An RNA of 207 nucleotides, treated with 2A3 and DMS and read out base by base. Conditions: 150 mM KOAc, 10 mM MgCl2 and 150 mM bicine (pH 8.5), 24 C. The data come from the RNA Mapping Database (RMDB), library ARCHII. The 2A3 profile rests on 1,106 reads.
RNA sequence: GGGAACGACUCGAGUAGAGUCGAAAAACACCAACUUGUGACCCAUGUGGGAGCACCAAGGUGAUGGAACAUGGCUGGUUUGCUUAGCGGGUUGGGCUGUAGGGUACACUAUGCUGGCCUGCCCACUCCAAGUUGAGAGUUGGGCCAUGGGAUUUGGACUAGAUCAACAGUUCGCUGUUGAUCUAGUAAAAGAAACAACAACAACAAC
Reactivity to 2A3 in 0.01 (KOAc 150mM, MgCl2 10mM, bicine 150mM(pH8.5), 24C), signal-to-noise 3, nucleotides 027 to 156: a000c030a000c000c000a040a060c050u060u100g020u050g090a060c050c020c050a200u290g130u300g060g040g020a110g060c050a030c060c010a150a120g030g010u020g020a040u100g060g050a000a020c040a030u000g010g000c050u010g000g140u080u050u050g030c000u020u020a020g020c030g000g000g000u100u060g020g020g000c030u120g110u200a120g020g040g020u300a070c020a000c060u130a200u300g080c150u030g050g020c000c000u000g010c000c000c000a020c000u000c010c000a140a080g000u060u180g040a090g020a030g020u100u000g000g000g000c000c000a000u000g010g010g010a060u150u070u100g020g020
Reactivity to DMS in 0.01 (KOAc 150mM, MgCl2 10mM, bicine 150mM(pH8.5), 24C), signal-to-noise 2, nucleotides 027 to 156: a100c000a060c000c000a030a030c030u000u000g030u020g010a290c020c000c020a190u010g020u010g020g030g000a200g010c030a070c050c000a040a020g020g010u010g020a040u000g010g010a070a110c030a040u010g010g040c000u000g020g010u000u000u000g010c050u000u010a090g010c100g000g040g010u000u020g070g010g030c050u010g020u000a090g010g020g060u010a110c060a060c050u010a080u010g060c040u020g040g000c010c020u010g000c000c020c010a030c040u000c020c000a070a170g030u000u010g010a130g000a050g030u000u000g020g000g080c020c050a020u000g040g000g000a150u000u000u000g020g010